Source information: The record gives the reactivity of an RNA of 177 nucleotides to 2A3 and DMS. Reactivities are rounded to 0.1 and cut off at 0 and 3. For 2A3 the reverse transcriptase was SuperScript II with manganese.
RNA sequence: GGGAACGACUCGAGUAGAGUCGAAAAGUCCGUUCCUUCGGGAACGGACAAAGGGAUACCAAGCAGUAGGUUCGUGUACCUACAGCAAAAAUAAACACGAAAAAAGCCCUCUGUUCGCAGAGGGCAACUGCCAUAAGAUGUUCGCAUCUUAUGGCAGAAAAGAAACAACAACAACAAC
Reactivity to 2A3 in 0.01 (KOAc 150mM, MgCl2 10mM, bicine 150mM(pH8.5), 24C), signal-to-noise 2, nucleotides 027 to 126: g000u020c010c000g030u000u030c000c010u000u060c150g080g000g010a000a010c000g000g000a000c000a000a000a000g040g010g020a020u060a090c000c000a020a040g140c050a020g020u000a000g000g010u000u010c000g010u040g020u040a060c000c000u000a020c030a030g090c010a030a110a000a000a000u100a040a040a000c000a000c040g000a040a050a060a000a000a010g000c010c000c000u010c000u020g040u040u070c260g000c120a000g000a010g010g000g000c010a000a000
Reactivity to DMS in 0.01 (KOAc 150mM, MgCl2 10mM, bicine 150mM(pH8.5), 24C), signal-to-noise 1, nucleotides 027 to 126: g000u000c010c000g050u000u000c000c000u020u000c190g020g020g020a010a000c010g010g020a000c020a000a030a090g000g000g000a160u010a200c010c010a100a140g010c160a080g000u000a020g020g010u000u000c030g020u020g030u000a140c000c000u000a010c010a130g030c110a000a080a040a020a020u030a000a050a010c000a020c010g040a000a080a070a030a090a110g010c010c000c000u000c000u000g020u000u030c180g010c000a010g040a020g000g000g010c000a000a000
Conditions: 150 mM KOAc, 10 mM MgCl2 and 150 mM bicine (pH 8.5), 24 C.